[RMDB]
RNA sequence: GGGAACGACUCGAGUAGAGUCGAAAAGCGGUGCCCUGUACUCGCAAUCCGCUAUAGCGGGGCCGAAUUCCCACUCGAGGUGGGACGACUUUAUGGUCUGACUUAAGGGAUUGGUGUUGACGCCCGGAUCGUUGUGACGAUUCGUCGUCACAACGAUAAAAGAAACAACAACAACAAC
Reactivity to DMS in 0.01 (KOAc 150mM, MgCl2 10mM, bicine 150mM(pH8.5), 24C), signal-to-noise 3, nucleotides 027 to 126: g020c020g000g000u000g000c010c020c040u020g000u010a050c070u000c110g010c100a100a100u030c090c060g010c060u010a070u030a100g000c080g000g000g010g010c000c030g010a060a160u020u000c000c000c010a050c040u010c120g040a110g000g010u000g010g010g000a080c150g000a050c030u020u000u020a060u030g000g020u000c000u010g000a270c020u010u020a100a110g000g010g000a080u010u010g000g010u000g020u020u010g020a130c050g010c020c030c000g040g000
Reactivity to 2A3 in 0.01 (KOAc 150mM, MgCl2 10mM, bicine 150mM(pH8.5), 24C), signal-to-noise 4, nucleotides 027 to 126: g050c030g000g000u080g060c020c000c000u010g010u030a070c050u050c050g010c010a050a140u100c080c070g010c050u050a020u090a100g060c030g000g000g020g000c020c000g020a010a060u070u050c000c000c000a000c010u050c060g110a050g000g200u040g010g000g000a000c030g010a000c010u080u120u120a120u300g030g000u000c020u010g050a080c020u050u040a080a130g050g020g040a060u030u140g070g000u080g040u010u040g010a020c060g040c000c020c010g020g000